Annotation
An RNA of 177 nucleotides, treated with 2A3 and DMS and read out base by base. The data come from the RNA Mapping Database (RMDB), library OK1LIB.

[RMDB]
RNA sequence: GGGAACGACUCGAGUAGAGUCGAAAAUUUAAAAAAUGAUAUUGAUCAAUAUGCGCAAAAGUUGUCGUUUAAUCAAUUAUUUUUGAUGUUUGAUCAACUGACGGAAGCACAUAAGAAAUUGAAUCAAAGCUCUUAAUAUGUUCGCAUAUUAAGAGCUAAAAGAAACAACAACAACAAC
Reactivity to 2A3 in 0.01 (KOAc 150mM, MgCl2 10mM, bicine 150mM(pH8.5), 24C), signal-to-noise 4, nucleotides 027 to 126: u070u070u070a050a090a010a030a040a040u190g060a080u180a150u170u060g010a000u020c010a010a040u030a050u120g040c060g010c040a040a050a120a190g030u020u040g020u080c040g040u030u050u120a030a030u000c000a000a020u060u090a220u130u220u050u020u120g100a090u020g100u030u250u130g050a070u120c020a030a020c010u090g010a020c030g120g030a050a020g000c010a050c010a050u060a060a040g040a070a120a000u040u060g030a020a010u020c000a010a000
Reactivity to DMS in 0.01 (KOAc 150mM, MgCl2 10mM, bicine 150mM(pH8.5), 24C), signal-to-noise 4, nucleotides 027 to 126: u000u020u030a010a020a050a090a050a070u010g000a060u020a130u010u000g000a040u000c020a120a130u010a030u010g000c120g030c030a090a080a130a070g010u000u000g000u000c010g020u000u010u020a060a020u000c010a000a020u000u030a130u010u010u010u010u010g010a010u000g010u010u020u010g000a040u020c050a010a010c020u020g010a060c180g010g010a110a110g010c020a020c030a010u000a040a030g000a040a080a040u010u000g000a030a050u010c030a040a070